Chemical mapping of a 207-nucleotide RNA with 2A3. 2A3 adducts were read by reverse transcription with SuperScript II with manganese. The reactions ran in a buffer of 150 mM KOAc, 10 mM MgCl2 and 150 mM bicine (pH 8.5), at 24 C. The 2A3 profile rests on 1,768 reads.
RNA sequence: GGGAACGACUCGAGUAGAGUCGAAAAGAAAGAAAGAAAGAAAUCUGACAGAAUGACGGAUUCGAUCGUUGUGGUCGGCGGGCCACCACGUCAUUCCUUCGCACUGUCUCGGGGCAGACCGCCAUAAAAAAGCGGAUCUACUUCGGUAGAUCCGCAAGCUAAACUACUUCUUCGGAAGUAGUUUAGCAAAAGAAACAACAACAACAAC
Reactivity to 2A3 in 0.01 (KOAc 150mM, MgCl2 10mM, bicine 150mM(pH8.5), 24C), signal-to-noise 3, nucleotides 027 to 156: g050a010a060a010g030a030a110a010g090a040a120a000g060a050a110a010u110c110u090g020a020c010a040g130a170a200u120g020a020c040g010g020a010u100u140c120g030a070u190c060g000u010u010g000u000g020g000u030c040g030g100c090g010g020g000c000c000a000c010c000a000c000g010u000c010a000u030u030c000c000u060u050c010g010c010a010c030u010g010u030c000u010c060g020g000g030g000c030a010g020a050c020c030g020c030c030a070u240a010a120a020a010a010a000g040c000g000g000a000u000c000u000a020c000u020u020c170g030g000u000a000g000a000u000c000c000g000c000a000a000